This 177-nucleotide RNA was probed chemically with DMS and 2A3. Reactivities are rounded to 0.1 and cut off at 0 and 3. The 2A3 profile rests on 1,405 reads. Reactivities are given for positions 27 through 126. 2A3 adducts were read by reverse transcription with SuperScript II with manganese. Conditions: 150 mM KOAc, 10 mM MgCl2 and 150 mM bicine (pH 8.5), 24 C.
[RMDB]
RNA sequence: GGGAACGACUCGAGUAGAGUCGAAAACGACUGCAUCCGAAGCGCUUUCAGUCGCUCAAUCAAUGAAAGCCAAAGCACUUAUUUUGACACAUUUCAGUCAACGCUCUUAUGAUGCUGACUUUUUACACGUAUCACCAGCUUUCGAGCUGGUGAUACGAAAAGAAACAACAACAACAAC
Reactivity to DMS in 0.01 (KOAc 150mM, MgCl2 10mM, bicine 150mM(pH8.5), 24C), signal-to-noise 2, nucleotides 027 to 126: c020g060a100c050u000g010c030a040u010c030c050g020a060a080g000c060g010c010u010u000u000c050a010g020u000c090g070c120u000c080a080a080u040c130a190a020u000g000a010a020a040g010c000c020a060a070a030g000c040a030c070u000u000a180u000u000u000u000g030a040c000a110c120a090u000u020u030c250a060g000u010c030a020a060c300g000c030u000c100u000u090a060u020g010a020u020g010c000u060g030a130c190u010u000u010u000u010a170c160a210
Reactivity to 2A3 in 0.01 (KOAc 150mM, MgCl2 10mM, bicine 150mM(pH8.5), 24C), signal-to-noise 2, nucleotides 027 to 126: c020g000a000c020u000g000c000a000u020c000c010g090a110a030g030c040g060c090u010u070u030c030a040g030u160c000g050c030u060c040a100a080u150c010a020a090u090g020a050a010a000g020c010c020a070a080a000g040c000a010c070u120u120a050u140u110u060u010g000a010c020a000c020a150u070u240u280c080a010g000u000c000a020a020c080g040c000u060c010u040u100a110u220g040a010u050g010c000u000g100a110c040u100u120u030u030u060a050c120a000

DMS adducts were read by reverse transcription with MarathonRT.